[RMDB]
An RNA of 177 nucleotides, treated with 2A3 and DMS and read out base by base.
Conditions: 150 mM KOAc, 10 mM MgCl2 and 150 mM bicine (pH 8.5), 24 C.
RNA sequence: GGGAACGACUCGAGUAGAGUCGAAAAGGAACUAUGUUCAGGCAUGAAGCCUUCACGUGCGUGCGAAAGCACCCUGAAACGGCUGAGCAUAGUUCCGAGCUGAAGGAGUCUCUGCUCAAAAUAAAUCAUACAAUUACAUUUUCGUAAUUGUAUGACAAAAAGAAACAACAACAACAAC
Reactivity to 2A3 in 0.01 (KOAc 150mM, MgCl2 10mM, bicine 150mM(pH8.5), 24C), signal-to-noise 9, nucleotides 027 to 126: g000g000a000a000c000u000a000u010g010u000u000c000a000g000g010c010a010u020g050a110a040g060c010c010u030u030c050a070c040g010u010g000c010g000u000g000c000g050a080a030a020g000c000a000c000c000c000u040g030a060a050a050c090g010g000c000u000g000a000g000c000a000u000a000g000u000u000c000c000g000a000g000c030u070g020a060a040g040g030a040g050u030c010u000c020u070g030c010u020c010a050a070a020a040u260a040a090a030u040c000
Reactivity to DMS in 0.01 (KOAc 150mM, MgCl2 10mM, bicine 150mM(pH8.5), 24C), signal-to-noise 9, nucleotides 027 to 126: g000g010a000a000c000u000a000u000g000u000u000c000a000g010g020c010a010u010g000a110a150g010c040c020u000u000c030a290c050g020u000g010c020g040u000g000c000g000a120a110a160g010c010a000c000c000c010u000g010a090a090a150c270g000g000c000u000g000a010g000c000a000u000a000g010u000u000c000c000g000a020g010c040u010g000a060a060g000g000a160g000u020c020u010c030u010g000c020u000c020a120a090a080a060u040a050a130a190u000c000